[RMDB]
RNA sequence: GGGAACGACUCGAGUAGAGUCGAAAAAUCAUUCUUUGACAGAAGUAGAAAGGUUUUAUUUCUGAAGUGACUUCACGUUAUGCAGGAUUGACUCUUACCUUUUUUAUCAUAUGCAGGAACAUGAUUCACGCCGAUCCACUUUCGAGUGGAUCGGCGUAAAAGAAACAACAACAACAAC
Reactivity to 2A3 in 0.01 (KOAc 150mM, MgCl2 10mM, bicine 150mM(pH8.5), 24C), signal-to-noise 1, nucleotides 027 to 126: a000u100c000a000u000u160c030u160u290u160g080a060c000a000g060a030a000g050u000a000g060a000a000a000g100g060u000u000u250u300a190u010u010u000c110u000g140a100a070g000u000g080a000c030u130u130c270a100c080g080u000u000a020u240g000c080a100g010g020a000u020u020g030a160c000u170c170u110u060a060c000c000u010u010u010u010u010u010a170u210c190a250u080a030u020g000c000a000g020g020a090a090c100a270u100g000a050u000u110c140